[RMDB]
RNA sequence: GGGAACGACUCGAGUAGAGUCGAAAAUUUCUUCUUGACGGCCUAUCACCCUGAAAUCGGUUUGUCCGGAGCUAGGGUUUCAUGGCCGGCAGAGCCCCGCACCUUUGCGGGGUCCGGUGCGCUCCUGAAGAUCUCAGGAGUUCGCUCCUGAGAUCUUAAAAGAAACAACAACAACAAC
Reactivity to DMS in 0.01 (KOAc 150mM, MgCl2 10mM, bicine 150mM(pH8.5), 24C), signal-to-noise 2, nucleotides 027 to 126: u000u060u010c010u010u030c060u030u020g050a030c000g000g000c000c000u000a130u020c220a020c020c000c000u020g000a150a030a070u020c000g000g030u020u030u020g000u050c000c000g000g010a100g010c150u000a000g000g000g010u000u060u030c140a090u020g010g000c000c000g000g030c000a070g010a190g000c000c000c000c000g060c060a130c280c160u060u030u000g030c050g000g000g020g020u000c030c040g000g000u010g010c080g000c020u000c000c030u020g000
Reactivity to 2A3 in 0.01 (KOAc 150mM, MgCl2 10mM, bicine 150mM(pH8.5), 24C), signal-to-noise 2, nucleotides 027 to 126: u020u090u020c030u010u010c020u010u160g030a070c010g000g010c010c010u140a100u130c030a040c030c020c000u060g030a040a160a080u030c000g010g180u160u260u300g240u170c010c000g000g030a010g070c020u070a040g000g010g000u020u010u100c090a050u070g000g000c010c050g000g010c010a040g010a020g000c010c000c000c000g010c010a090c010c110u160u240u070g000c020g000g000g000g000u020c010c040g040g010u010g050c060g030c030u010c010c050u010g020